Structure probing data (2A3) for a 207-nucleotide construct. 2A3 adducts were read by reverse transcription with SuperScript II with manganese.

[RMDB]
RNA sequence: GGGAACGACUCGAGUAGAGUCGAAAAUAGGGAGUUCGCUCCCUAAAAAAAACCUUUGUGAAGCUGAUGACCAUACCUCUCCGUAUAGACCCAUUGGGUCUAUAUACGGAUGUAUGCAAGGCUUCACUCUGGUAAAAAAGCGUCGUUCGCGACGCAAGCAACUAAUCUCUUUCGAGAGAUUAGUUGCAAAAGAAACAACAACAACAAC
Reactivity to 2A3 in 0.01 (KOAc 150mM, MgCl2 10mM, bicine 150mM(pH8.5), 24C), signal-to-noise 1, nucleotides 027 to 156: u070a010g020g010g000a000g030u040u050c160g100c070u080c010c000c080u090a050a020a000a010a000a090a020a020c000c000u000u000u000g000u000g010a020a010g010c020u040g000a190u150g030a280c120c040a000u000a000c000c000u010c000u000c020c000g000u010a010u000a010g000a000c000c000c090a150u180u300g000g000g010u080c010u010a030u000a010u000a010c010g020g000a020u200g000u000a000u000g000c000a020a140g020g000c010u010u000c000a010c000u000c000u030g010g000u110a150a160a040a000a000a000g000c000g000u000c000g010u050u160c280g020c020g140a000c000g000c010a000a020
The data come from the RNA Mapping Database (RMDB), library RNAMAK.